[RMDB]
RNA sequence: GGGAACGACUCGAGUAGAGUCGAAAAGUUUAGACCGUCGUGAGACAGGUUAGUUUUACCCUACUGUAAGUAUUUUUGAGUGAACUUUGAUAGUACGAGAGGAACUCUAAGUGAUGACCACUGGUAGUGCGAUUAACUAUUAAGUUAUGUUGCUUAGCAUAGGAAUCCAGUUCGCUGGAUUCCUAUGAAAAGAAACAACAACAACAAC
Reactivity to 2A3 in 0.01 (KOAc 150mM, MgCl2 10mM, bicine 150mM(pH8.5), 24C), signal-to-noise 3, nucleotides 027 to 156: g010u070u120u070a040g000a030c000c000g020u030c020g020u060g080a070g010a060c100a120g030g000u030u030a040g030u050u050u070u160a060c030c030c000u030a030c040u050g080u140a030a110g030u030a130u110u160u000u100u100g060a030g010u060g070a060a020c020u080u050u010g030a030u060a080g080u090a000c030g020a020g020a010g160g010a030a010c000u000c020u040a040a040g010u020g100a030u050g040a050c010c040a020c070u010g000g020u040a090g020u010g030c020g070a080u120u060a030a010c000u040a040u190u130a210a030g000u000u060a100u130g030u030u010g000c000u020u050a000g000
Reactivity to DMS in 0.01 (KOAc 150mM, MgCl2 10mM, bicine 150mM(pH8.5), 24C), signal-to-noise 2, nucleotides 027 to 156: g020u000u000u000a150g000a070c010c020g050u000c010g020u000g010a300g000a050c010a090g070g020u000u000a050g030u000u000u000u010a120c000c010c040u000a100c030u010g000u000a070a070g020u000a070u000u000u000u000u000g010a140g000u000g010a050a090c030u000u000u010g020a120u000a070g010u000a070c060g000a170g010a130g000g010a070a160c060u030c020u000a060a070g000u010g030a100u000g000a120c060c020a050c060u000g030g030u000a050g020u000g000c050g010a180u010u000a070a040c020u000a090u010u000a050a110g000u000u000a140u010g020u000u000g010c000u000u000a100g040
Chemical mapping of a 207-nucleotide RNA with 2A3 and DMS.
The RNA was probed in 150 mM KOAc, 10 mM MgCl2 and 150 mM bicine (pH 8.5) at 24 C.